[RMDB]
RNA sequence: GGGAACGACUCGAGUAGAGUCGAAAAUCGCCGACCAGUCGUCGGGUCCGUCGAAGGAGCCGGGUGCGACGGAACCGGCGGAUAGCCACAGUGCCGGGCUGACCGCGCAGAUCGCUGCGGUGCGUGCGGACUGUAGGAAAUUCGUUUCCUACAGUCCAAAAGAAACAACAACAACAAC
Reactivity to DMS in 0.01 (KOAc 150mM, MgCl2 10mM, bicine 150mM(pH8.5), 24C), signal-to-noise 5, nucleotides 027 to 126: u010c030g020c010c020g010a100c050c050a110g020u000c020g010u000c000g000g000g000u000c010c010g000u010c110g010a140a160g000g000a100g010c020c030g020g000g010u010g000c020g010a020c000g000g000a060a040c030c000g000g000c010g000g010a040u000a070g010c020c030a070c080a080g010u010g020c030c020g000g010g000c060u010g000a070c030c030g020c070g020c080a120g000a080u000c120g000c020u000g020c020g010g020u000g010c060g020u000g010c200
Reactivity to 2A3 in 0.01 (KOAc 150mM, MgCl2 10mM, bicine 150mM(pH8.5), 24C), signal-to-noise 5, nucleotides 027 to 126: u040c000g010c030c000g060a090c010c030a040g100u070c000g030u020c010g000g030g020u010c010c000g020u020c030g060a170a160g110g060a060g080c040c000g050g020g060u180g050c010g000a010c020g000g000a020a030c010c000g000g000c010g000g000a030u080a020g020c010c010a070c020a040g080u030g100c020c000g030g000g010c040u060g030a050c010c020g000c010g000c070a030g040a210u160c060g000c060u130g050c030g000g000u030g030c040g050u070g030c030